[RMDB]
RNA sequence: GGGAACGACUCGAGUAGAGUCGAAAAGAAGACGUGACGAAAAGUCACGAAAAGAGCUCGUAGGUACCACGAGCAAAGAAAAGGUACCAAGACGGAAACGUCAGACAUCGGAGACGAUGUCAAAAGACGAUCAUCCGUAGUUCGCUACGGAUGAUCGAAAAGAAACAACAACAACAAC
Reactivity to DMS in 0.01 (KOAc 150mM, MgCl2 10mM, bicine 150mM(pH8.5), 24C), signal-to-noise 2, nucleotides 027 to 126: g000a060a060g000a200c000g000u000g030a000c000g000a000a140a290a200g000u000c000a000c000g020a030a000a050a130g050a290g000c060u010c000g000u010a110g000g000u000a000c050c000a030c000g040a000g000c070a010a120a090g000a070a000a010a000g000g030u020a000c010c010a110a300g000a080c000g010g000a140a120a180c000g000u000c020a210g000a000c000a000u010c000g000g090a300g000a110c040g030a020u000g000u000c000a020a040a070a040g010a170
Reactivity to 2A3 in 0.01 (KOAc 150mM, MgCl2 10mM, bicine 150mM(pH8.5), 24C), signal-to-noise 2, nucleotides 027 to 126: g170a050a020g130a030c010g000u000g000a000c020g040a020a220a070a110g000u010c000a000c010g020a040a020a000a010g160a010g000c000u000c010g000u010a040g000g000u000a000c000c000a000c010g010a000g020c120a050a010a000g070a000a070a000a020g020g000u000a010c000c000a000a000g020a000c010g030g010a030a060a000c010g000u010c000a000g010a010c010a000u000c010g000g000a040g010a090c010g000a000u000g010u000c010a000a000a000a020g050a020
Annotation: This 177-nucleotide RNA was probed chemically with DMS and 2A3. In probing experiments dimethyl sulfate is read out at A N1 and C N3, which are open when not base-paired. Values cover nucleotides 27 to 126. The data come from the RNA Mapping Database (RMDB), library OK1LIB. For 2A3, 4,074 sequencing reads were counted.